[RMDB]
RNA sequence: GGGAACGACUCGAGUAGAGUCGAAAAGCUCGCGCGUCCGCUGAAGCAGCAGCCGCUUGAGCGCCGCCAGGGCGUUCUCCGUCGGUGGGCUCAGCGCGGCUUUCAGGUCGUGCGCCUGGAUGGAGAACCUAUGGCGGUACUUCGGUACCGCCAUAGGAAAAGAAACAACAACAACAAC
Reactivity to 2A3 in 0.01 (KOAc 150mM, MgCl2 10mM, bicine 150mM(pH8.5), 24C), signal-to-noise 3, nucleotides 027 to 126: g020c000u030c020g040c010g010c000g020u060c070c000g040c070u040g050a140a060g020c070a020g010c050a010g070c050c050g000c020u010u050g050a000g000c030g050c010c000g000c030c020a100g050g000g060c050g020u080u040c070u020c080c010g040u030c020g050g200u130g080g020g020c020u070c060a030g000c040g020c000g060g000c000u050u080u110c070a000g040g010u020c000g010u030g010c000g030c010c000u070g060g010a050u050g020g010a060g000a050a040
Reactivity to DMS in 0.01 (KOAc 150mM, MgCl2 10mM, bicine 150mM(pH8.5), 24C), signal-to-noise 2, nucleotides 027 to 126: g000c060u030c020g050c220g020c030g000u000c020c030g040c030u000g000a120a130g000c070a100g030c070a040g010c070c030g020c000u000u030g010a020g000c000g000c180c000g010c030c050a200g000g020g000c040g000u000u020c030u000c040c000g030u010c030g000g060u020g010g000g030c010u010c110a110g000c080g020c010g000g000c010u000u020u050c110a110g000g030u000c000g020u000g020c010g000c090c000u100g000g020a020u010g000g040a080g000a070a100
Chemical mapping of a 177-nucleotide RNA with 2A3 and DMS. For DMS, 3,144 sequencing reads were counted. The data come from the RNA Mapping Database (RMDB), library OK1LIB. The RNA was probed in 150 mM KOAc, 10 mM MgCl2 and 150 mM bicine (pH 8.5) at 24 C. 2A3 adducts were read by reverse transcription with SuperScript II with manganese.